[RMDB]
RNA sequence: GGGAACGACUCGAGUAGAGUCGAAAAGCUGUCAGCUUCGGCUGACAGCAAACGCUCAUCUCAUGGAGCGGAAGACGAAUAGCUACAUAUUCGACAUGAGAAAAAGCUGCGCGUUCGCGCGCAGCAAGUAUGUAUACGGGUUCGCCCGUAUACAUACAAAAGAAACAACAACAACAAC
Reactivity to DMS in 0.01 (KOAc 150mM, MgCl2 10mM, bicine 150mM(pH8.5), 24C), signal-to-noise 3, nucleotides 027 to 126: g020c000u000g010u000c000a000g020c000u010u010c210g040g020c000u000g000a010c010a000g000c010a010a060a050c000g020c000u000c000a080u000c010u000c000a000u000g000g010a010g000c000g010g010a080a030g020a020c000g000a000a010u000a010g010c190u010a130c110a140u000a020u000u000c000g000a040c000a010u000g000a010g010a040a220a090a110a100g020c000u000g010c000g030c010g030u000u010c240g020c000g030c000g010c000a000g010c000a000a020
Reactivity to 2A3 in 0.01 (KOAc 150mM, MgCl2 10mM, bicine 150mM(pH8.5), 24C), signal-to-noise 4, nucleotides 027 to 126: g010c000u000g000u010c000a010g000c020u060u100c180g120g000c000u000g010a000c000a000g000c000a000a000a000c010g000c000u010c000a070u010c010u010c010a010u000g000g010a010g000c040g010g130a100a020g060a010c010g010a010a000u020a020g060c120u260a090c110a230u050a040u010u010c010g000a000c000a010u010g000a010g000a060a010a000a010a000g000c000u010g010c020g000c000g020u030u080c200g010c010g000c000g000c080a000g000c000a000a010
This 177-nucleotide RNA was probed chemically with DMS and 2A3. The DMS profile rests on 4,087 reads. The reactions ran in a buffer of 150 mM KOAc, 10 mM MgCl2 and 150 mM bicine (pH 8.5), at 24 C.